The record gives the reactivity of an RNA of 207 nucleotides to DMS and 2A3. The RNA was probed in 150 mM KOAc, 10 mM MgCl2 and 150 mM bicine (pH 8.5) at 24 C.
RNA sequence: GGGAACGACUCGAGUAGAGUCGAAAACUGCGACGCAUUUCCUCUGUGACGGCCCUUCCGCCUUCGCGCGGUCUGAGCUCAAACGCCCCUCCUCGCAAACCUUCCGAGGUUAGCGCGUUGGGGUCGCCUAAACUCAAAGCCUCAAUGACACAUUUGGGAUAAUGACAUACUUCGGUAUGUCAUUAUCAAAAGAAACAACAACAACAAC
Reactivity to DMS in 0.01 (KOAc 150mM, MgCl2 10mM, bicine 150mM(pH8.5), 24C), signal-to-noise 1, nucleotides 027 to 156: c010u010g040c000g020a120c090g000c060a120u000u000u000c020c070u000c090u000g010u000g000a110c090g020g000c010c030c020u000u020c040c040g020c040c030u000u000c190g000c070g060c040g030g050u010c040u020g000a020g040c030u030c060a070a050a080c030g010c000c000c010c000u000c050c000u010c010g040c010a080a070a070c010c000u010u000c140c170g030a050g040g040u010u010a150g030c040g000c100g010u000u000g010g010g010g000u000c030g080c010c000u000a080a060a090c060u000c010a040a110a120g070c000c010u000c060a060a100u000g030a130c040a040c050a040u000u000u000g030g030
Reactivity to 2A3 in 0.01 (KOAc 150mM, MgCl2 10mM, bicine 150mM(pH8.5), 24C), signal-to-noise 5, nucleotides 027 to 156: c040u060g050c040g100a040c080g010c050a050u020u040u080c000c010u030c040u070g060u040g070a050c060g020g000c030c010c010u080u030c010c010g010c030c020u200u220c140g060c010g000c010g050g000u000c060u040g030a020g000c010u060c110a100a050a030c030g000c010c000c000c000u010c010c000u020c000g000c000a030a010a030c010c000u090u080c050c120g030a010g000g000u000u020a020g000c000g000c000g000u000u000g000g000g000g000u040c000g000c000c000u150a090a070a060c010u010c040a050a050a040g040c000c020u060c050a050a160u110g060a040c020a010c040a180u130u200u230g100g020

Source: RMDB library OK3TST, as collected in RNAgym. For 2A3, 4,158 sequencing reads were counted. 2A3 adducts were read by reverse transcription with SuperScript II with manganese.